[RMDB]
RNA sequence: GGGAACGACUCGAGUAGAGUCGAAAAGCUGGCUAUUAAGCAUCUGAUAAGGAAGCUCAAGGAAAGUAAGGUACUUGUUUGUCAUGUUCUCAAUUUUUUCUUCAGUACUUUGCAUGAUACUGGAAGCUCCUAGCUAGUAUUUCGAUACUAGCUAGGAAAAAGAAACAACAACAACAAC
Reactivity to 2A3 in 0.01 (KOAc 150mM, MgCl2 10mM, bicine 150mM(pH8.5), 24C), signal-to-noise 2, nucleotides 027 to 126: g020c030u010g010g030c030u020a030u200u110a170a000g010c010a030u030c050u020g050a110u050a200a040g060g000a000a030g030c010u000c050a030a040g070g000a110a030a010g030u100a000a040g040g000u020a020c030u050u080g060u110u190u060g050u000c030a050u100g040u040u000c030u000c000a120a130u070u050u060u040u050u080c040u000u030c000a000g020u010a010c000u060u110u150g060c050a100u100g080a080u070a030c020u020g000g040a020a020g060c000
Reactivity to DMS in 0.01 (KOAc 150mM, MgCl2 10mM, bicine 150mM(pH8.5), 24C), signal-to-noise 5, nucleotides 027 to 126: g010c060u000g010g010c050u010a100u000u010a070a060g020c030a060u000c020u000g010a100u020a100a120g020g010a060a060g020c040u010c060a070a090g010g020a070a060a090g000u010a080a070g010g010u000a040c040u000u000g010u000u010u000g010u000c050a050u010g000u000u010c020u010c020a060a010u010u010u010u010u010u020c050u000u000c030a010g020u000a010c040u000u010u020g010c170a090u000g000a110u000a030c020u000g000g010a070a100g010c300